[RMDB]
RNA sequence: GGGAACGACUCGAGUAGAGUCGAAAAUAGUCCCGUACGUUCGCAAUAAGGGAUGCCUGCCUCGGAAAGAGGCAGGUCGCAGUGACUCGGACGCUCCAACUGUCUAGUAACAACAUAGGUGACCGCAGAUAUUUAGCUUGUUCGCAAGCUAAAUAUCAAAAGAAACAACAACAACAAC
Reactivity to DMS in 0.01 (KOAc 150mM, MgCl2 10mM, bicine 150mM(pH8.5), 24C), signal-to-noise 4, nucleotides 027 to 126: u010a120g010u000c010c010c010g010u010a110c150g020u000u010c090g010c090a130a080u010a110a160g000g000g000a040u000g010c000c000u000g020c000c000u000c000g000g020a110a120a170g000a020g000g010c000a000g010g020u000c090g010c070a130g010u000g000a050c040u000c050g020g000a070c040g000c040u000c020c050a080a140c120u000g010u000c020u000a070g000u000a080a040c070a050a070c120a060u000a050g010g010u000g000a120c040c070g030c180a100
Reactivity to 2A3 in 0.01 (KOAc 150mM, MgCl2 10mM, bicine 150mM(pH8.5), 24C), signal-to-noise 3, nucleotides 027 to 126: u100a020g050u010c020c020c000g000u040a020c030g040u030u060c080g010c090a050a090u060a160a070g060g000g010a030u060g000c000c000u000g000c000c000u010c010g030g170a300a140a080g010a060g000g000c010a000g010g000u000c000g000c010a020g050u030g120a030c010u010c050g000g010a010c020g020c020u020c020c010a090a090c030u030g020u000c010u030a060g050u060a070a060c080a010a030c020a070u100a050g100g000u030g040a020c020c030g030c050a010
Description:
An RNA of 177 nucleotides, treated with DMS and 2A3 and read out base by base.